[RMDB]
RNA sequence: GGGAACGACUCGAGUAGAGUCGAAAACGCCCAACCCUGGUGAGAUGGCCAAGGUGGGAGAAGGCAAGUAUCGAGAGGACUUUCAGAUGGAUGAAGGAGAGGAUCCUAGCCUCCUGUUCCAGUCAUAACGUUAUACUUCGUUCGCGAAGUAUAACGUAAAAGAAACAACAACAACAAC
Reactivity to 2A3 in 0.01 (KOAc 150mM, MgCl2 10mM, bicine 150mM(pH8.5), 24C), signal-to-noise 7, nucleotides 027 to 126: c090g020c000c000c000a080a140c030c000c020u040g040g000u040g050a290g050a200u140g150g000c010c040a050a030g050g010u020g010g020g010a080g030a050a030g040g020c070a040a050g050u040a070u110c050g030a040g000a020g100g060a040c010u050u070u040c080a090g020a180u130g060g030a030u070g110a110a040g050g030a040g000a030g050g040a030u040c000c010u020a070g040c000c010u010c010c020u030g050u040u020c030c010a030g060u030c040a130u080a170
Reactivity to DMS in 0.01 (KOAc 150mM, MgCl2 10mM, bicine 150mM(pH8.5), 24C), signal-to-noise 4, nucleotides 027 to 126: c270g010c000c000c000a100a120c050c030c030u020g000g030u020g000a130g010a120u010g000g050c020c010a010a050g020g030u000g010g000g010a050g010a090a060g020g010c060a060a050g000u000a020u010c050g000a090g020a110g000g010a070c050u010u030u020c080a080g010a120u000g000g000a040u020g020a060a040g000g000a030g000a090g000g020a090u020c050c010u000a110g010c090c000u000c010c000u000g000u020u000c010c010a070g000u030c090a080u000a110